[RMDB]
RNA sequence: GGGAACGACUCGAGUAGAGUCGAAAAAGAACGAUGGCUACAAAUCCCUGGACGAAGGUCAGAAAGUAUCCUUCACCAUCGAAAGCGGCGCUAAAGGCCCGGCAGCUGGCAACGUAACUUCUCUGUACCUUCUAUUGAUGUUCGCAUCAAUAGAAGGAAAAGAAACAACAACAACAAC
Reactivity to 2A3 in 0.01 (KOAc 150mM, MgCl2 10mM, bicine 150mM(pH8.5), 24C), signal-to-noise 2, nucleotides 027 to 126: a000g040a050a030c010g020a020u050g040g030c050u100a050c120a020a130a090u050c010c000c000u010g010g030a010c030g020a050a010g020g000u000c020a030g280a050a130a000g070u140a080u110c000c010u010u030c020a020c020c000a020u010c010g020a030a050a000g040c040g040g000c020g010c030u130a200a160a090g070g040c030c070c020g010g010c000a030g020c020u030g000g000c030a040a000c000g030u040a050a020c020u110u040c040u000c020u050g040u060a070
Reactivity to DMS in 0.01 (KOAc 150mM, MgCl2 10mM, bicine 150mM(pH8.5), 24C), signal-to-noise 2, nucleotides 027 to 126: a130g020a100a170c070g000a020u000g000g040c050u000a070c120a100a170a100u020c010c000c010u000g030g010a140c200g040a040a020g040g000u010c130a100g010a050a080a110g000u000a120u010c020c010u020u000c020a270c040c010a010u020c030g000a080a160a090g000c090g000g020c100g020c080u000a030a100a200g000g000c030c010c060g000g000c070a060g030c040u000g000g030c010a050a050c040g010u000a070a060c150u000u000c020u010c020u010g000u010a180
Source information:
This 177-nucleotide RNA was probed chemically with 2A3 and DMS. For 2A3, 1,621 sequencing reads were counted. 2A3 adducts were read by reverse transcription with SuperScript II with manganese. DMS (dimethyl sulfate) methylates the pairing face of unpaired adenines and cytosines. It was measured as part of the RMDB library RFMREP. The DMS profile rests on 1,105 reads.